[RMDB]
RNA sequence: GGGAACGACUCGAGUAGAGUCGAAAAAGACACCUAUUACGAUAGGUGACAUUUGAACCAGCGAACAAUUCAGUUGCGAGAUUCGAGGUUUCAGUCUGAAUCAUAGUAGCCAUUACGAUGGCUACAACUCACUCCCGACUGUUCGCAGUCGGGAGAACACCCCAUACUCGUUCGCGAGUAUGGGGUGAAAAGAAACAACAACAACAAC
Reactivity to 2A3 in 0.01 (KOAc 150mM, MgCl2 10mM, bicine 150mM(pH8.5), 24C), signal-to-noise 2, nucleotides 027 to 156: a010g070a000c000a000c000c010u000a000u030u080a080c280g030a020u000a010g000g000u020g010a030c040a070u130u110u130g080a040a010c010c010a020g090c000g000a000a000c000a090a110u030u000c000a000g000u010u000g000c000g010a000g000a000u000u010c010g010a020g080g040u090u180u250c020a010g120u040c010u030g010a000a000u030c010a010u040a080g000u000a000g030c000c000a030u020u050a070c150g190a010u040g000g000c000u000a000c000a000a000c030u060c020a090c000u000c000c000c010g000a000c000u010g080u060u090c200g020c120a000g010u000c000g000g010g000a000g000a000a000

Structure probing data (2A3) for a 207-nucleotide construct. 2A3 adducts were read by reverse transcription with SuperScript II with manganese. It was measured as part of the RMDB library M2RFPK.